Chemical mapping of a 207-nucleotide RNA with DMS and 2A3. For DMS, 1,782 sequencing reads were counted. The data come from the RNA Mapping Database (RMDB), library OK3TST. For 2A3, 1,543 sequencing reads were counted. As a SHAPE reagent, 2A3 marks flexible, mostly unpaired nucleotides at the ribose 2'-OH. Values cover nucleotides 27 to 156.

[RMDB]
RNA sequence: GGGAACGACUCGAGUAGAGUCGAAAAUGGCAUGCCCGUACGGAAACCAUCCCGGCGGAUAAGUGCAGGUGUCGACAUCGGAUGUGUGUUACGUCUGACUCGAUACUGGAUGGGAAAGCAUGCUUCAUGCUAAUUGCAUGCGAAAGGAUGGCGGAUGCCGACAAUACCCUUUCGAGGGUAUUGUCGGAAAAGAAACAACAACAACAAC
Reactivity to DMS in 0.01 (KOAc 150mM, MgCl2 10mM, bicine 150mM(pH8.5), 24C), signal-to-noise 1, nucleotides 027 to 156: u000g000g000c060a070u000g040c030c040c020g050u000a180c000g050g000a150a050a090c030c020a080u020c030c040c040g000g040c040g020g000a200u000a020a020g000u020g000c060a230g010g020u010g010u000c010g000a020c090a110u000c000g080g000a020u020g050u000g050u020g050u000u010a050c010g030u000c020u010g010a020c100u000c020g040a110u000a010c010u020g010g020a090u000g030g010g000a110a050a130g020c000a010u000g010c000u000u000c160a060u000g020c060u000a100a120u000u000g000c010a020u010g010c000g020a050a090a070g020g000a040u010g000g010c000g040g020a250u020g000
Reactivity to 2A3 in 0.01 (KOAc 150mM, MgCl2 10mM, bicine 150mM(pH8.5), 24C), signal-to-noise 3, nucleotides 027 to 156: u120g030g020c010a000u020g050c000c000c000g020u090a150c020g040g000a120a130a050c030c000a010u070c000c010c030g020g000c030g000g030a070u090a190a040g030u080g100c060a040g000g060u020g010u020c010g020a010c010a020u020c010g000g040a040u020g040u030g050u050g100u180u290a020c010g000u000c010u000g000a020c000u000c000g010a000u010a020c010u030g050g050a040u050g030g040g040a040a090a000g000c000a000u030g020c000u070u110c060a060u060g010c030u150a190a120u130u140g000c000a000u010g000c010g060a100a000a010g070g000a070u020g000g000c030g070g000a080u160g060